RNA sequence: GGGAACGACUCGAGUAGAGUCGAAAAGAUAUGGAUGGAGAUACACACUAUAUGGUCGGAAACGACCAUAAUAAUGUGUGAAUAUCGUUGAAAUCCUAAGUCAAACCCGAACGUUCGCGUUCGGGAAGAUCAUGGGGAAGUUCGCUUCCCCAUGAUCAAAAGAAACAACAACAACAAC
Reactivity to 2A3 in 0.01 (KOAc 150mM, MgCl2 10mM, bicine 150mM(pH8.5), 24C), signal-to-noise 1, nucleotides 027 to 126: g060a040u050a040u140g010g000a030u000g060g000a050g000a020u020a020c030a010c000a010c030u020a010u010a000u110g000g000u010c010g010g010a050a040a080c010g000a000c000c050a010u000a000a000u050a010a020u150g000u010g010u000g020a030a030u040a010u000c030g080u120u010g010a030a020a010u010c000c000u030a080a040g020u050c040a080a110a090c000c000c000g000a000a000c000g010u060u090c300g000c010g180u000u000c000g000g020g000a010a020
Reactivity to DMS in 0.01 (KOAc 150mM, MgCl2 10mM, bicine 150mM(pH8.5), 24C), signal-to-noise 2, nucleotides 027 to 126: g020a020u000a300u010g000g030a020u000g000g000a150g030a050u030a080c020a010c000a000c010u000a070u000a000u000g000g000u000c000g000g020a140a130a120c000g010a010c000c000a000u000a010a030u010a050a050u010g020u010g000u010g000a090a120u000a020u000c020g010u010u000g020a200a120a040u000c000c010u030a040a130g000u010c020a070a100a200c010c000c000g000a000a020c000g010u000u010c200g000c010g000u020u000c000g000g000g020a010a000